The data come from the RNA Mapping Database (RMDB), library OK1LIB. Structure probing data (DMS and 2A3) for a 177-nucleotide construct. DMS adducts were read by reverse transcription with MarathonRT.
RNA sequence: GGGAACGACUCGAGUAGAGUCGAAAAUUGGUCGAAUACCAUGGGAAUGGUGACCGAAAAGACCCUCUGGUGCUUUUCGAGUUUGAGGAGAUGAAGGAGGCAAUCGAGCAGGAGAAGCUUGCGAAGGUCAGGCCUAAAAUUUCGAUUUUAGGCCUGAAAAAGAAACAACAACAACAAC
Reactivity to DMS in 0.01 (KOAc 150mM, MgCl2 10mM, bicine 150mM(pH8.5), 24C), signal-to-noise 4, nucleotides 027 to 126: u010u020g000g000u000c030g010a190a090u050a050c000c010a040u000g010g090g000a140a020u010g000g000u010g000a040c020c010g010a030a050a050a100g020a110c040c000c090u010c100u030g010g050u010g000c010u000u010u010u000c020g000a140g020u000u020u000g000a060g000g000a080g000a040u010g010a080a080g010g010a070g000g010c040a060a080u050c090g000a100g000c020a040g010g000a110g000a070a080g010c010u000u000g000c070g000a090a060g000g010
Reactivity to 2A3 in 0.01 (KOAc 150mM, MgCl2 10mM, bicine 150mM(pH8.5), 24C), signal-to-noise 5, nucleotides 027 to 126: u030u040g050g000u040c030g050a090a050u120a170c020c010a030u030g070g040g080a110a040u070g010g010u040g000a010c000c010g000a030a100a010a000g090a040c030c020c000u030c090u150g060g020u140g100c010u060u020u020u020c030g070a110g090u070u110u120g090a070g030g050a110g020a060u130g030a050a010g070g050a010g010g000c030a010a050u050c050g010a020g020c030a030g030g100a080g040a110a000g010c000u070u040g030c050g050a050a000g030g010
For 2A3 the reverse transcriptase was SuperScript II with manganese. The DMS profile rests on 6,863 reads.